[RMDB]
RNA sequence: GGGAACGACUCGAGUAGAGUCGAAAAGCGCAGCGAGUCCGCUCCGCGGCGCAGCGAAGGCCAUCGAGCUGCGCACAUGCGACCCGAUAGGCAGUGAACUACGCCUGGGCAGGGCGAAGCCCGCGGAAACGCAGGUGGAGGCCCCGAGCCGUUCUGACGUAGAUAAAUCGUUCGCGAUUUAUCUACGAAAAGAAACAACAACAACAAC
Reactivity to 2A3 in 0.01 (KOAc 150mM, MgCl2 10mM, bicine 150mM(pH8.5), 24C), signal-to-noise 2, nucleotides 027 to 156: g010c020g010c020a020g000c010g060a030g080u090c090c000g030c020u080c050c030g040c080g070g010c030g000c080a000g020c000g080a150a070g040g040c010c020a110u160c090g050a090g010c000u010g000c000g070c000a020c030a040u130g020c010g020a100c000c020c010g040a090u100a040g020g030c120a050g020u040g160a140a050c060u140a010c130g020c030c030u040g000g010g000c040a080g000g000g020c010g020a030a000g000c050c020c000g000c000g000g000a070a070a000c020g000c020a020g020g000u020g000g080a060g170g000c010c020c000c040g010a000g000c000c000g000u010u000c000u020g050a030